RNA sequence: GGGAACGACUCGAGUAGAGUCGAAAACGCUGGGUUGGCUCAAUUGGACAUGACGAUGCUGAAGCGCGCACGGCAUACGUCAACAGCCAAUUGAGGCCAACCUGUGCUGAAGCGCGCACGGCAACCGAAAGGUGCGAAACUCGUUGUUCGCAACGAGACGCGCAAGUGGAUUCGUCCACUUGCGCGUAAAAGAAACAACAACAACAAC
Reactivity to 2A3 in 0.01 (KOAc 150mM, MgCl2 10mM, bicine 150mM(pH8.5), 24C), signal-to-noise 1, nucleotides 027 to 156: c050g000c030u100g030g020g030u000u000g000g000c000u000c030a000a000u000u000g000g000a040c140a220u220g000a000c000g000a000u000g000c000u020g030a110a060g010c030g000c030g050c030a030c000g000g000c000a050u200a280c030g000u040c090a200a070c000a050g100c000c010a000a000u000u000g020a040g050g020c010c010a000a000c030c000u000g000u000g000c030u080g030a130a030g060c040g000c000g000c000a020c020g050g070c020a120a080c020c010g120a150a070a070g040g020u020g020c000g000a090a040a010c000u000c020g020u010u020g030u060u090c150g030c040a000a000c010g000a000g000